Structure probing data (2A3 and DMS) for a 177-nucleotide construct. The reactions ran in a buffer of 150 mM KOAc, 10 mM MgCl2 and 150 mM bicine (pH 8.5), at 24 C. For DMS, 1,235 sequencing reads were counted. As a SHAPE reagent, 2A3 marks flexible, mostly unpaired nucleotides at the ribose 2'-OH.
[RMDB]
RNA sequence: GGGAACGACUCGAGUAGAGUCGAAAACACAUACCACUUAGCCUGUUGCUGAGAUAACUUGCGUGAAACCAGCACUUUACCCUCUGCCAGCCAGAAGGUCAGCCCAAGAGUGAGCUGAUCUGUGGGCCAUGGUCCAGAGGUUCGCCUCUGGACCAUGAAAAGAAACAACAACAACAAC
Reactivity to 2A3 in 0.01 (KOAc 150mM, MgCl2 10mM, bicine 150mM(pH8.5), 24C), signal-to-noise 2, nucleotides 027 to 126: c050a010c000a020u160a030c000c000a040c050u050u090a040g060c010c040u060g060u140u170g000c000u000g020a040g000a080u060a070a020c040u090u160g060c040g060u070g070a090a020a060c050c000a040g010c000a010c060u060u080u140a120c020c010c000u010c010u020g030c020c010a040g030c000c000a070g030a140a010g030g000u000c020a000g010c000c000c000a170a040g150a050g250u170g020a020g000c010u010g020a010u000c020u040g020u110g050g000g000c030
Reactivity to DMS in 0.01 (KOAc 150mM, MgCl2 10mM, bicine 150mM(pH8.5), 24C), signal-to-noise 2, nucleotides 027 to 126: c110a040c090a040u020a110c070c050a070c010u010u030a090g050c050c060u000g020u000u000g050c020u000g000a070g010a050u000a090a060c050u000u000g000c100g000u000g000a110a090a110c130c020a080g010c040a050c130u010u020u000a100c070c030c020u010c090u000g010c030c070a070g020c040c040a060g000a150a010g000g010u000c080a020g010c000c000c000a060a170g000a220g000u000g010a040g000c000u000g000a020u000c000u010g020u000g000g030g040c060